[RMDB]
RNA sequence: GGGAACGACUCGAGUAGAGUCGAAAAAGCGGCGGGUGGGCGUCAGUUCAGGCGGCAUGUGCGCGCAGUUUGCCGCACGCCUUGUCACGGGUCAAGCGGCGGCCCAACCGUCAGAAUUGGCCUACGAUCCCUAUUAAGCGUUCGCGCUUAAUAGGGAAAAAGAAACAACAACAACAAC
Reactivity to 2A3 in 0.01 (KOAc 150mM, MgCl2 10mM, bicine 150mM(pH8.5), 24C), signal-to-noise 2, nucleotides 027 to 126: a000g090c020g040g010c020g010g020g020u060g020g010g020c010g040u050c040a080g020u020u110c050a070g030g010c020g010g000c060a040u130g050u080g040c050g000c030g000c060a050g040u090u130u200g000c000c010g020c010a000c010g000c000c000u060u090g110u090c050a030c160g000g000g050u040c020a120a010g030c040g050g000c000g010g170c000c020c000a010a000c000c000g000u010c000a000g010a000a040u030u040g040g020c010c000u040a050c090g070a070
Reactivity to DMS in 0.01 (KOAc 150mM, MgCl2 10mM, bicine 150mM(pH8.5), 24C), signal-to-noise 2, nucleotides 027 to 126: a120g010c110g010g000c020g000g000g030u000g010g000g010c020g010u000c030a040g030u000u000c070a110g000g030c040g000g010c050a120u000g000u000g010c010g040c080g010c020a100g010u000u000u000g010c040c060g000c000a050c060g000c040c000u010u000g020u000c100a120c110g010g010g000u000c130a090a120g010c040g000g000c010g010g000c000c010c010a040a070c010c010g020u000c020a030g010a040a060u010u010g020g000c020c000u000a040c200g000a150